[RMDB]
RNA sequence: GGGAACGACUCGAGUAGAGUCGAAAAAGUUUAGAUUUCGAUCUAAACUAGACCACUAAGAGGAUGACCAGUGACUACGACGCAUCUAGUAGAAUGCGCCCAGCUGUGAGCAGUUCGCUGCUCACAACAAAUUUUAUGCAUUCGUGCAUAAAAUUUGAAAAGAAACAACAACAACAAC
Reactivity to 2A3 in 0.01 (KOAc 150mM, MgCl2 10mM, bicine 150mM(pH8.5), 24C), signal-to-noise 6, nucleotides 027 to 126: a000g000u010u010u000a020g000a020u080u050u090c230g040a010u000c000u010a000a000a000c000u000a010g040a030c000c030a020c050u060a110a060g030a040g160g020a090u060g060a080c020c020a040g030u020g080a070c040u040a030c100g080a010c020g010c020a010u000c030u040a040g040u020a040g080a200a040u040g010c010g030c020c020c020a030g020c050u040g000u000g010a000g000c000a010g000u020u100c220g030c080u000g000c000u000c000a000c000a000a010
Reactivity to DMS in 0.01 (KOAc 150mM, MgCl2 10mM, bicine 150mM(pH8.5), 24C), signal-to-noise 8, nucleotides 027 to 126: a030g010u000u000u000a010g000a010u000u000u010c170g010a030u000c000u000a000a010a010c010u000a070g000a170c020c020a090c100u010a080a120g010a070g000g000a070u010g000a130c050c030a100g020u010g000a090c060u000a060c090g010a080c060g010c030a020u000c020u000a130g010u010a080g000a070a030u000g010c040g010c010c010c090a120g010c130u000g010u000g000a010g020c000a010g010u000u010c230g010c010u000g010c000u000c000a000c010a040a090